[RMDB]
RNA sequence: GGGAACGACUCGAGUAGAGUCGAAAAGGGGUUAGCCCUGGGCUGGUACAUAACCUUAUUGGCAUGUUGCAAACCAUAGCUGAUGGCAAAGCCCAUUUUACAGAGACUGUCAAACCUGUGCUUGACCAGGGCCGUAAAGUUUCGACUUUACGGCCCUAAAAGAAACAACAACAACAAC
Reactivity to DMS in 0.01 (KOAc 150mM, MgCl2 10mM, bicine 150mM(pH8.5), 24C), signal-to-noise 1, nucleotides 027 to 126: g060g000g000g020u000u020a260g010c030c020c020u020g000g040g020c080u020g010g020u000a050c050a030u010a050a220c050c060u010u030a140u000u000g000g010c070a030u020g010u000u000g020c120a040a070a060c110c050a060u000a080g020c060u030g010a050u000g000g000c040a050a080a270g000c100c020c000a110u000u020u000u000a130c080a120g000a120g000a110c020u000g000u030c120a060a040a100c110c020u000g000u000g010c080u000u000g000a080c020c080